[RMDB]
RNA sequence: GGGAACGACUCGAGUAGAGUCGAAAAACGGAAUCUCGAAGAUGCGUCGAUUCGUUGUUAGCCGGAGGAACGACGCCCACACUAGGUUCGGCACUGUGAAGGGGUCGUCGGCCGCAAGCAGUCGAUCACGCAUCUGAAUGUUCGCAUUCAGAUGCGUAAAAGAAACAACAACAACAAC
Reactivity to 2A3 in 0.01 (KOAc 150mM, MgCl2 10mM, bicine 150mM(pH8.5), 24C), signal-to-noise 2, nucleotides 027 to 126: a000c070g030g040a090a090u030c040u010c100g050a090a030g020a020u060g020c020g030u050c070g020a040u160u070c050g030u050u020g030u050u080a030g050c120c060g000g030a080g080g100a090a020c010g000a010c010g200c000c000c000a050c000a000c020u170a050g090g000u140u120c050g130g050c080a050c110u040g030u000g070a190a080g000g000g020g010u060c000g000u000c050g040g040c020c000g030c000a000a020g030c010a000g050u130c010g000a020u000c020
Reactivity to DMS in 0.01 (KOAc 150mM, MgCl2 10mM, bicine 150mM(pH8.5), 24C), signal-to-noise 3, nucleotides 027 to 126: a100c130g020g020a120a110u000c050u000c040g020a110a050g010a040u000g010c020g020u000c090g010a040u000u000c110g020u010u010g000u010u000a150g010c080c030g000g020a140g000g000a150a040c020g000a010c010g010c010c000c030a180c040a010c030u000a060g010g010u000u000c140g000g000c100a110c020u000g000u000g000a140a090g000g010g020g020u000c010g030u000c010g010g000c030c010g000c100a050a080g020c040a040g020u000c000g010a060u000c050